Source: RMDB library OK1LIB, as collected in RNAgym.
Chemical mapping of a 177-nucleotide RNA with 2A3 and DMS.
2A3 adducts were read by reverse transcription with SuperScript II with manganese.
The reactions ran in a buffer of 150 mM KOAc, 10 mM MgCl2 and 150 mM bicine (pH 8.5), at 24 C.
RNA sequence: GGGAACGACUCGAGUAGAGUCGAAAAACUUGCGGCUGCGGUCGAUAAGUACGCCAACGAUAAGGCUUAUGGUAUCUCUCACACCGACCUCUUCGAGCGCUCGUCUGUCAUGGAAGAGAACAUCAACUAUCGAUGUUUUGUUCGCAAAACAUCGAUAAAAAGAAACAACAACAACAAC
Reactivity to 2A3 in 0.01 (KOAc 150mM, MgCl2 10mM, bicine 150mM(pH8.5), 24C), signal-to-noise 5, nucleotides 027 to 126: a000c040u020u080g020c010g030g000c000u030g020c060g050g030u050c000g050a090u030a140a000g040u040a030c060g020c040c040a080a090c080g130a140u110a190a080g040g000c000u070u040a070u150g060g000u060a100u020c060u000c000u000c030a050c010a000c030c050g060a060c010c020u040c010u040u050c030g070a060g020c020g000c030u020c030g100u010c050u070g080u020c020a100u130g060g020a090a010g040a020g010a070a040c020a070u110c020a050a090c020
Reactivity to DMS in 0.01 (KOAc 150mM, MgCl2 10mM, bicine 150mM(pH8.5), 24C), signal-to-noise 3, nucleotides 027 to 126: a050c040u000u000g000c080g000g000c010u000g030c080g020g040u000c000g000a110u010a000a080g000u030a130c030g000c010c020a090a130c130g010a130u010a090a090g020g000c050u000u030a040u000g010g000u000a040u010c040u010c010u000c050a110c070a110c150c030g000a060c050c040u000c070u020u010c080g010a070g010c030g010c070u000c000g000u000c030u000g000u010c130a050u010g000g000a090a020g000a090g010a060a060c180a060u040c270a050a090c170